[RMDB]
RNA sequence: GGGAACGACUCGAGUAGAGUCGAAAAUAAUCCAGGGAGGAUACCUGAACGAAUUCAUCGUCAACCCGCUGGACACCGACGAAGAUUUGACCAUCCGUGUUGGCGGCGAGCCGGAAAACGCGCUUUUCCACCUGCGGAAAGUAUCGAAGGCGUCGCACAUGGUUAUAUCGUUCGCGAUAUAACCAUGAAAAGAAACAACAACAACAAC
Reactivity to DMS in 0.01 (KOAc 150mM, MgCl2 10mM, bicine 150mM(pH8.5), 24C), signal-to-noise 2, nucleotides 027 to 156: u020a180a110u000c020c010a000g000g010g030a170g040g000a180u000a070c020c050u030g030a060a230c040g000a130a130u000u010c050a140u000c030g020u020c030a060a090c020c000c040g000c060u000g020g010a170c030a050c030c000g000a080c040g020a110a080g000a170u000u000u030g010a080c100c100a080u010c010c040g020u020g010u000u000g000g030c110g000g050c070g010a270g020c020c030g000g000a150a050a080a160c040g020c160g030c030u030u000u020u000c030c010a070c090c040u030g010c030g010g010a020a060a080g020u010a120u010c000g020a170a130g000g000c060g020u000c010g000c080a240
Reactivity to 2A3 in 0.01 (KOAc 150mM, MgCl2 10mM, bicine 150mM(pH8.5), 24C), signal-to-noise 2, nucleotides 027 to 156: u190a020a030u090c040c020a050g050g030g020a210g050g010a040u060a160c040c040u060g040a150a060c030g030a060a110u260u200c060a160u120c080g040u030c020a070a080c000c000c030g060c030u000g010g000a020c010a010c070c040g060a050c030g040a030a060g070a170u080u050u170g020a040c020c010a040u000c020c030g010u000g010u060u040g010g000c020g000g020c000g000a020g000c000c000g000g000a050a130a020a030c040g030c010g000c030u010u010u070u010c040c000a090c050c100u090g000c050g010g010a080a040a000g030u040a040u130c020g030a030a020g070g000c000g030u020c010g000c010a020
Structure probing data (DMS and 2A3) for a 207-nucleotide construct. The reactions ran in a buffer of 150 mM KOAc, 10 mM MgCl2 and 150 mM bicine (pH 8.5), at 24 C. High 2A3 reactivity points to a flexible backbone, as in loops and unpaired stretches. Reactivities are given for positions 27 through 156. For DMS the reverse transcriptase was MarathonRT.